Overview: This 177-nucleotide RNA was probed chemically with 2A3 and DMS. The reactions ran in a buffer of 150 mM KOAc, 10 mM MgCl2 and 150 mM bicine (pH 8.5), at 24 C.
[RMDB]
RNA sequence: GGGAACGACUCGAGUAGAGUCGAAAAAUCCGGCGGAACUCUUGAAACAGCUUUAUGUCGUCAAUUUCCAACAGUGUGUUUGGGUAAGAUUUUGGUGCAAAUCAAUAAAGUUACUCAAGAACCAACACUAGUAUCGGUAUUUCGAUACCGAUACUAGAAAAGAAACAACAACAACAAC
Reactivity to 2A3 in 0.01 (KOAc 150mM, MgCl2 10mM, bicine 150mM(pH8.5), 24C), signal-to-noise 5, nucleotides 027 to 126: a000u020c020c000g060g050c080g050g050a090a110c020u040c000u050u030g040a060a120a040c040a050g000c000u070u070u050a080u140g100u100c010g000u010c010a030a060u020u020u050c010c010a030a040c060a130g110u060g020u020g020u270u030u040g010g000g020u040a090a030g020a180u030u050u050u050g010g000u010g020c050a080a090a160u090c010a030a000u040a030a040a010g020u020u010a010c010u000c010a000a010g020a080a140c010c010a020a020c040a020
Reactivity to DMS in 0.01 (KOAc 150mM, MgCl2 10mM, bicine 150mM(pH8.5), 24C), signal-to-noise 5, nucleotides 027 to 126: a090u010c030c010g030g050c130g000g010a100a050c080u010c010u000u020g010a100a100a150c200a060g010c030u010u010u000a030u010g000u010c070g010u000c080a040a060u000u000u000c010c010a030a060c080a120g020u010g020u000g010u000u000u000g000g000g000u000a050a120g000a090u000u000u000u000g010g010u000g030c170a070a080a060u010c130a080a040u000a020a040a050g000u000u000a050c110u000c000a010a020g010a080a080c030c030a080a110c200a120